Conditions: 150 mM KOAc, 10 mM MgCl2 and 150 mM bicine (pH 8.5), 24 C. The record gives the reactivity of an RNA of 207 nucleotides to 2A3 and DMS. For DMS, 1,630 sequencing reads were counted. 2A3 adducts were read by reverse transcription with SuperScript II with manganese. DMS (dimethyl sulfate) methylates the pairing face of unpaired adenines and cytosines. For DMS the reverse transcriptase was MarathonRT.

RNA sequence: GGGAACGACUCGAGUAGAGUCGAAAAGAGACCCUACGAGGACAAUAGCAGCCUUUAAGUAAAGUCGCAUCAAUAGUUACACAAGGUUUCUAGUUUUUAAUUGUGUAAAGGGCCAAAAUCUCCUUGAUCACUUCGCUCCGUACAAUGUCAUCGUCGGUCUCCUUUUAGCGUUCGCGCUAAAAGGAGAAAAAGAAACAACAACAACAAC
Reactivity to 2A3 in 0.01 (KOAc 150mM, MgCl2 10mM, bicine 150mM(pH8.5), 24C), signal-to-noise 2, nucleotides 027 to 156: g060a000g030a030c000c000c000u000a030c000g000a010g070g000a030c030a060a170u060a050g010c070a000g020c020c000u080u110u090a170a080g020u080a030a040a050g030u090c080g000c110a030u010c030a110a160u090a260g060u010u040a000c020a000c000a010a020g010g020u020u120u070c030u030a050g070u010u010u020u080u280a110a160u050u030g000u000g010u030a020a010a090g040g010g030c040c020a030a080a060a100u030c060u040c020c050u040u090g060a060u130c010a000c020u020u030c020g020c010u030c010c030g010u060a040c030a040a090u130g010u040c000a000u020c020g050u000c030g000g020
Reactivity to DMS in 0.01 (KOAc 150mM, MgCl2 10mM, bicine 150mM(pH8.5), 24C), signal-to-noise 1, nucleotides 027 to 156: g000a120g010a110c010c020c020u000a080c010g000a080g020g000a120c010a140a120u010a090g050c080a110g020c000c020u000u000u020a000a070g060u020a080a050a070g020u020c050g020c070a120u000c070a150a070u040a050g010u000u010a030c040a040c000a040a020g040g020u000u000u000c050u000a150g040u030u000u000u000u000a030a260u000u000g000u000g000u000a010a060a120g000g000g020c020c030a060a050a110a090u000c020u000c050c080u000u000g030a140u000c040a030c050u010u000c050g020c000u000c020c060g000u000a050c000a050a140u000g020u000c040a070u000c040g020u010c180g000g020